[RMDB]
RNA sequence: GGGAACGACUCGAGUAGAGUCGAAAAUUACCGCCCAGUAUGGGGUGCAGCGUUCCUGCAAUAUCCAGGGCACCUAGGUGCAGCCUUGUAGUUUUAGUGGACUUUAGGCUAAAGAAUUUCACUAGCAAAAAUCUUUAAGGGUUCGCCCUUAAAGAAAGUAGUUCUUAUAGUUCGCUAUAAGAACUACAAAAGAAACAACAACAACAAC
Reactivity to DMS in 0.01 (KOAc 150mM, MgCl2 10mM, bicine 150mM(pH8.5), 24C), signal-to-noise 1, nucleotides 027 to 156: u000u000a050c040c000g040c000c000c000a050g030u000a100u010g000g000g030g000u000g000c120a080g010c060g010u030u010c080c020u000g050c070a110a230u010a130u020c010c020a050g010g020g050c050a040c040c000u000a050g040g030u010g020c050a100g030c050c000u020u010g040u000a120g000u010u000u000u000a120g040u010g000g010a030c040u010u010u000a040g050g000c040u030a070a060a190g000a060a070u010u020u040c030a070c020u010a060g000c090a030a020a120a110a090u000c010u000u000u010a010a000g000g040g000u000u010c300g000c030c000c010u000u000a000a000a050g000a020a030a080
Reactivity to 2A3 in 0.01 (KOAc 150mM, MgCl2 10mM, bicine 150mM(pH8.5), 24C), signal-to-noise 3, nucleotides 027 to 156: u140u050a080c010c000g020c000c000c000a050g090u130a130u200g010g000g020g000u020g000c000a010g010c020g090u130u110c010c000u000g000c000a020a110u050a060u150c040c030a020g020g040g010c010a060c000c020u040a070g080g000u050g030c020a010g010c000c000u060u090g060u130a020g020u000u020u050u060a020g000u010g020g000a000c010u070u090u050a020g010g010c010u060a090a140a010g060a040a030u070u210u210c020a030c010u040a030g040c030a030a070a090a130a210u010c000u020u000u000a000a000g060g000g010u030u070c170g040c010c000c000u000u000a000a000a000g000a000a040a000
Structure probing data (DMS and 2A3) for a 207-nucleotide construct.
Conditions: 150 mM KOAc, 10 mM MgCl2 and 150 mM bicine (pH 8.5), 24 C.
The data come from the RNA Mapping Database (RMDB), library M2RFPK.
The DMS profile rests on 1,747 reads.